[RMDB]
RNA sequence: GGGAACGACUCGAGUAGAGUCGAAAAUUCAGCGCAUUCGUGCGCUGAAAAGCUGUACAACCCAUGUACAGAAAACAAAACAAAAACAAAACAAAAAGCGUAGCAGGGUUCUUUUCGAAGAACCCAAUAAUACAAGAGGAUUCGUCCUCUUGUAUUAAAAAGAAACAACAACAACAAC
Reactivity to 2A3 in 0.01 (KOAc 150mM, MgCl2 10mM, bicine 150mM(pH8.5), 24C), signal-to-noise 2, nucleotides 027 to 126: u010u000c000a000g000c010g000c000a000u020u080c170g110u020g000c000g000c010u000g010a000a000a000a000g000c010u000g030u010a020c000a000a070c020c010c000a010u020g000u020a000c010a000g020a070a050a010a020c040a000a060a010a000c040a040a120a040a030a000c050a060a080a020a010c040a040a220a080a060a020g180c120g150u140a040g110c120a090g030g000g000u010u030c010u030u060u050u090c160g050a010a000g000a000a020c000c000c000a000a020
Reactivity to DMS in 0.01 (KOAc 150mM, MgCl2 10mM, bicine 150mM(pH8.5), 24C), signal-to-noise 3, nucleotides 027 to 126: u000u000c000a010g030c000g020c000a020u000u010c180g040u010g010c000g020c010u000g000a010a010a110a130g010c010u000g020u010a000c020a050a110c010c010c010a170u000g010u000a020c010a000g020a100a050a100a060c130a070a070a060a050c100a040a080a060a050a070c100a080a070a090a050c060a050a050a090a100a120g000c140g020u000a070g030c150a120g020g000g000u000u010c010u010u010u010u010c170g000a010a000g000a000a000c000c000c000a030a020
About this RNA: Conditions: 150 mM KOAc, 10 mM MgCl2 and 150 mM bicine (pH 8.5), 24 C. This 177-nucleotide RNA was probed chemically with 2A3 and DMS. For DMS, 2,288 sequencing reads were counted. For DMS the reverse transcriptase was MarathonRT. 2A3 adducts were read by reverse transcription with SuperScript II with manganese. The data come from the RNA Mapping Database (RMDB), library M2PK50. Values are in units of 0.01, from 0 to 300, in steps of 10.